[RMDB]
RNA sequence: GGGAACGACUCGAGUAGAGUCGAAAAUCCUGGAUGGGCGCGUUUUCUCUGUCAAUGCUCUUCUGGGCUGAACUCCUCUGGAUCAUUACUCACUAAUCCCUGACCCCGCUGCGGCGGGGGUUUUCAUGAUACAGAAGCAAUUCGUUGCUUCUGUAUCAAAAGAAACAACAACAACAAC
Reactivity to 2A3 in 0.01 (KOAc 150mM, MgCl2 10mM, bicine 150mM(pH8.5), 24C), signal-to-noise 5, nucleotides 027 to 126: u010c010c000u000g070g020a070u050g020g020g020c040g010c050g030u010u020u070u050c040u010c020u040g100u080c070a090a100u110g010c000u010c000u090u050c040u070g030g010g000c010u020g040a060a050c010u010c020c000u010c030u020g040g010a060u040c020a060u040u160a060c020u030c060a060c030u080a050a080u050c000c000c000u030g080a120c000c010c010c000g000c010u030g020c080g120g000c000g000g000g000g000g000u010u010u010u040c010a010u020
Reactivity to DMS in 0.01 (KOAc 150mM, MgCl2 10mM, bicine 150mM(pH8.5), 24C), signal-to-noise 3, nucleotides 027 to 126: u020c000c000u000g000g020a120u000g000g010g020c050g030c060g030u010u000u000u010c020u000c040u000g030u010c070a100a130u040g000c040u010c020u010u020c080u000g040g000g000c030u020g010a070a130c090u000c020c020u010c060u010g000g000a090u000c030a050u010u000a090c040u000c030a080c040u010a090a140u000c010c010c010u000g000a300c040c000c000c020g030c000u000g020c120g030g000c000g020g020g010g010g010u000u000u000u000c030a180u000

About this RNA
Chemical mapping of a 177-nucleotide RNA with 2A3 and DMS. For 2A3 the reverse transcriptase was SuperScript II with manganese. Reactivities are given for positions 27 through 126. High DMS reactivity at an A or C suggests that its Watson-Crick edge is free. For DMS the reverse transcriptase was MarathonRT. It was measured as part of the RMDB libraries RFM100 and RFMREP.